[RMDB]
RNA sequence: GGGAACGACUCGAGUAGAGUCGAAAAACUCAUGUUGGCAGAUGUAUUGAUCUCAAGAGCGAACGCCAUUUUGUAUCUGCAUCUUGGUGGUUUAGAGUGCCCUACAUCCAGGUUACCUGACACUCAGACAGCACCUAACUUUCGAGUUAGGUGCUGUAAAAGAAACAACAACAACAAC
Reactivity to DMS in 0.01 (KOAc 150mM, MgCl2 10mM, bicine 150mM(pH8.5), 24C), signal-to-noise 2, nucleotides 027 to 126: a020c070u000c000a040u020g000u000u000g010g010c080a040g010a110u000g020u040a090u000u000g020a110u000c050u000c050a160a090g000a080g020c050g000a080a060c090g010c020c050a100u000u010u000u010g010u000a070u010c120u000g010c010a020u000c040u000u000g000g020u000g000g010u000u000u000a090g010a110g020u000g000c080c040c090u000a060c120a050u020c060c060a080g020g000u000u000a090c050c040u000g000a050c070a040c070u000c120a120g010
The record gives the reactivity of an RNA of 177 nucleotides to DMS. Conditions: 150 mM KOAc, 10 mM MgCl2 and 150 mM bicine (pH 8.5), 24 C. The data come from the RNA Mapping Database (RMDB), library OK2TRN.